[RMDB]
RNA sequence: GGGAACGACUCGAGUAGAGUCGAAAAUAUUCCGGUGUGGGAUACUUGGUAAUAUGUAACGCUAAUUGCAUAAGAUUGUAGGACGGAAUUUACAGUCUUGGUUGUUAUAAACCUGAAACUAAGUAAGAAUAGUAAGAGCGGUUCGCCGCUCUUACAACGUAAGAAUGCUGUUCGCAGCAUUCUUACGAAAAGAAACAACAACAACAAC
Reactivity to DMS in 0.01 (KOAc 150mM, MgCl2 10mM, bicine 150mM(pH8.5), 24C), signal-to-noise 2, nucleotides 027 to 156: u010a080u000u000c000c010g000g040u040g020u000g000g030g000a240u000a020c030u000u000g000g050u000a080a070u000a020u000g020u000a020a040c130g030c140u010a120a110u000u000g030c030a030u000a010a020g000a010u000u000g030u000a040g010g030a250c040g030g000a060a300u000u000u020a030c000a030g010u000c020u000u010g030g020u000u020g000u000u000a130u000a060a010a040c000c010u010g000a080a050a050c030u000a020a030g000u000a020a180g000a140a120u000a160g000u000a020a030g010a010g010c000g000g050u000u000c300g060c010c000g000c000u000c000u020u000a010c000a050a100
Reactivity to 2A3 in 0.01 (KOAc 150mM, MgCl2 10mM, bicine 150mM(pH8.5), 24C), signal-to-noise 3, nucleotides 027 to 156: u090a020u020u000c000c020g030g050u150g010u140g050g120g040a050u020a030c000u020u040g010g010u010a020a020u030a040u060g040u030a070a030c060g030c230u120a120a080u110u070g000c000a010u010a040a000g000a010u010u000g010u010a000g020g090a030c010g000g000a010a000u030u020u000a010c000a000g010u000c000u010u020g010g000u000u030g060u100u160a040u110a170a040a020c000c010u010g000a020a010a000c010u010a000a000g030u010a040a070g050a150a090u130a110g000u010a000a000g000a000g000c010g000g030u030u040c130g010c050c000g000c000u010c000u000u000a000c000a000a000